This 177-nucleotide RNA was probed chemically with 2A3 and DMS. For 2A3 the reverse transcriptase was SuperScript II with manganese. The reactions ran in a buffer of 150 mM KOAc, 10 mM MgCl2 and 150 mM bicine (pH 8.5), at 24 C. 2A3 is a SHAPE reagent: it acylates the 2'-hydroxyl of flexible nucleotides of all four kinds. The 2A3 profile rests on 25,514 reads. Reactivities are given for positions 27 through 126. Values are in units of 0.01, from 0 to 300, in steps of 10.

[RMDB]
RNA sequence: GGGAACGACUCGAGUAGAGUCGAAAAGAUAUGGAAAUUAGGUUUCGCAUGGGCACUUCGGAAACGAAAACCCAUGAACUACGAAACUAAUUUCCUAAGUCAAAACGAGACACUUCGGUGUCUCGAACAUAAACGUAUGGUUCGCCAUACGUUUAUGAAAAGAAACAACAACAACAAC
Reactivity to 2A3 in 0.01 (KOAc 150mM, MgCl2 10mM, bicine 150mM(pH8.5), 24C), signal-to-noise 5, nucleotides 027 to 126: g010a020u050a030u110g000g010a000a010a030u020u010a060g260g070u030u020u000c080g010c060a000u000g010g000g000c120a040c150u020u000c010g010g020a050a040a020c020g010a020a020a060a090c000c000c000a000u010g010a010a020c080u220a080c070g000a010a000a000c000u000a000a000u010u000u000c000c000u000a100a000g030u000c020a010a010a070a160c020g000a000g010a000c010a010c030u090u180c300g150g000u000g000u000c000u000c000g000a000a000
Reactivity to DMS in 0.01 (KOAc 150mM, MgCl2 10mM, bicine 150mM(pH8.5), 24C), signal-to-noise 8, nucleotides 027 to 126: g000a030u000a300u010g000g000a010a020a010u000u000a010g020g010u000u000u000c000g010c010a010u000g000g010g000c080a080c250u000u000c010g000g000a100a090a130c010g000a020a020a120a240c000c000c000a010u000g000a060a080c210u010a280c030g000a010a010a020c000u000a010a010u000u000u000c000c000u000a010a110g000u000c030a070a050a060a130c020g000a000g010a020c000a010c000u000u010c190g030g010u000g000u000c000u000c000g000a050a120